[RMDB]
RNA sequence: GGGAACGACUCGAGUAGAGUCGAAAAAGAGGACAAACAAUGGAAGCCUUGGAAGAUUCAAGAUCACCAUUGAUUCUCCUGGAGCUCACCGCUACAGGCUGAGGGUGAGAUAUCAUUCAGAUGUCUCGUCUUUGGCGCAGUUCGCUGCGCCAAAGACAAAAGAAACAACAACAACAAC
Reactivity to DMS in 0.01 (KOAc 150mM, MgCl2 10mM, bicine 150mM(pH8.5), 24C), signal-to-noise 1, nucleotides 027 to 126: a060g000a090g010g020a070c090a140a150a180c000a030a030u010g010g040a100a170g010c240c010u000u000g020g000a070a150g010a120u000u000c050a010a000g000a110u000c130a090c040c020a030u000u000g020a110u000u000c150u000c000c020u000g000g010a030g030c010u000c150a010c090c110g010c040u000a080c060a020g000g010c160u000g000a070g000g000g010u000g020a000g000a040u000a010u020c000a130u010u000c300a220g010a030u000g000u000c000u000c000